[RMDB]
RNA sequence: GGGAACGACUCGAGUAGAGUCGAAAAGUGCCCCCAGGCCUCUGGGGCUCCAGGCACAACGAACGCCGCUUCCUCAGGAACACCAAGAAGUUCAUCUCCCUGGGGAAGCAUGCCAAGCUCUCGCUGCAGGAGCUGACGUGGAAGAUGAGCGUGCGGAUAUCGUAUUAGCGUUCGCGCUAAUACGAUAAAAAGAAACAACAACAACAAC
Reactivity to 2A3 in 0.01 (KOAc 150mM, MgCl2 10mM, bicine 150mM(pH8.5), 24C), signal-to-noise 2, nucleotides 027 to 156: g020u010g040c000c020c000c010c020a020g080g050c000c070u200c030u050g030g010g030g030c030u000c030c030a040g010g010c010a010c020a090a070c080g060a120a020c000g030c090c010g000c000u000u000c020c000u000c010a000g040g020a090a050c040a060c070c070a080a060g110a090a020g120u140u090c030a130u050c050u020c030c010c000u000g000g000g000g020a000a000g000c000a000u020g000c010c020a030a030g000c000u000c010u030c020g080c100u120g000c080a050g010g000a000g000c010u040g010a030c050g030u030g030g050a090a040g020a090u120g020a030g060c050g010u050g070c040g000g020a030
Reactivity to DMS in 0.01 (KOAc 150mM, MgCl2 10mM, bicine 150mM(pH8.5), 24C), signal-to-noise 1, nucleotides 027 to 156: g000u000g000c070c000c000c010c020a050g020g010c070c040u010c050u000g040g050g000g000c020u010c030c030a110g030g010c040a100c030a090a080c070g030a070a070c060g050c000c030g040c010u000u000c000c000u010c020a020g030g000a120a100c040a230c070c090a060a130g010a040a100g000u000u000c050a170u000c000u000c030c010c030u010g000g020g000g000a050a020g000c030a000u010g020c070c020a090a090g000c000u000c010u000c020g020c140u000g000c050a090g000g010a010g080c000u000g010a000c070g030u010g030g010a080a070g000a030u000g000a040g000c030g010u000g000c050g000g020a200
This 207-nucleotide RNA was probed chemically with 2A3 and DMS. 2A3 adducts were read by reverse transcription with SuperScript II with manganese. Reactivities are given for positions 27 through 156. Conditions: 150 mM KOAc, 10 mM MgCl2 and 150 mM bicine (pH 8.5), 24 C. The 2A3 profile rests on 1,644 reads. It was measured as part of the RMDB library OK3TST.